Structure probing data (DMS and 2A3) for a 207-nucleotide construct.
Source: RMDB library OK3TST, as collected in RNAgym.
For DMS, 3,603 sequencing reads were counted.
The reactions ran in a buffer of 150 mM KOAc, 10 mM MgCl2 and 150 mM bicine (pH 8.5), at 24 C.

RNA sequence: GGGAACGACUCGAGUAGAGUCGAAAAUUCUGAAGCCGAAAGCGAAGCUCGUCGACGACGCCGAAGAGGCGAAGAAGAGCGACGCGCAGAGGAUCGCGGAUCUACAGACGAAAGUCGACGCGCUGCCCAAGCAGGUUGCGGCCGGACUUCGCGAGCAAGAGUUAGUACUAUUCGUAGUACUAACUCUAAAAGAAACAACAACAACAAC
Reactivity to DMS in 0.01 (KOAc 150mM, MgCl2 10mM, bicine 150mM(pH8.5), 24C), signal-to-noise 3, nucleotides 027 to 156: u000u000c010u020g030a110a230g040c020c020g020a120a080a110g000c030g010a060a300g050c020u010c000g030u000c010g010a250c030g010a300c000g000c000c010g000a140a140g000a300g000g040c000g010a060a230g010a040a030g000a010g030c010g030a190c030g000c030g000c140a090g000a250g000g000a080u000c010g000c020g020g000a080u010c030u000a160c020a060g000a300c030g000a050a070a070g030u000c000g000a060c000g010c010g000c020u000g000c000c040c040a080a150g000c090a090g010g000u010u010g010c010g020g000c010c030g000g000a060c050u000u000c000g030c020g010a060g000c100a080
Reactivity to 2A3 in 0.01 (KOAc 150mM, MgCl2 10mM, bicine 150mM(pH8.5), 24C), signal-to-noise 3, nucleotides 027 to 156: u080u010c030u050g060a080a020g060c000c030g060a060a000a000g030c000g030a020a010g010c010u010c030g050u020c010g050a080c030g000a030c000g020c010c010g020a200a110g040a050g100g000c040g010a030a020g050a050a010g020a000g000c000g010a010c000g010c000g000c020a020g030a070g100g040a050u030c020g000c020g030g020a040u030c040u120a070c060a080g010a050c020g030a070a050a020g020u010c010g020a040c000g010c010g000c040u020g000c010c010c010a090a060g050c050a060g040g080u150u170g000c010g020g040c060c050g030g000a030c040u020u010c000g000c020g020a040g040c060a070